[RMDB]
RNA sequence: GGGAACGACUCGAGUAGAGUCGAAAAAAAGAUACCGUCGUCAAGAUGAAAUCGGUACACCUUAUUGUGUAACAUUCGACUUUGAUUCAUUAGAAGAUAAUCAAGUUACAGUACGUGACAGAGAUUCCACCUUAGGAUCAUUCGUGAUCCUAAGGUGAAAAGAAACAACAACAACAAC
Reactivity to DMS in 0.01 (KOAc 150mM, MgCl2 10mM, bicine 150mM(pH8.5), 24C), signal-to-noise 5, nucleotides 027 to 126: a050a060a050g000a140u000a040c090c020g010u000c160g000u010c120a110a100g000a100u000g000a040a100a090u000c040g000g010u010a040c040a070c040c150u010u010a090u010u010g010u000g000u000a030a050c070a120u000u000c080g000a040c070u000u000u000g010a110u000u000c080a080u010u010a080g010a060a090g020a070u000a010a030u000c020a040a140g010u000u000a020c070a110g000u010a040c220g010u000g010a040c060a070g020a110g010a140u000u000c060
Reactivity to 2A3 in 0.01 (KOAc 150mM, MgCl2 10mM, bicine 150mM(pH8.5), 24C), signal-to-noise 5, nucleotides 027 to 126: a000a000a010g070a040u040a030c000c040g010u050c030g040u020c060a020a030g020a120u120g070a060a030a040u120c070g000g010u010a000c000a040c010c030u120u130a190u220u200g030u010g020u020a040a020c020a110u030u070c050g020a020c020u100u060u070g040a060u020u000c020a010u030u080a080g100a250a020g030a100u080a090a010u040c020a050a020g000u020u020a020c020a050g050u070a040c040g030u030g040a010c020a010g110a010g020a100u070u030c030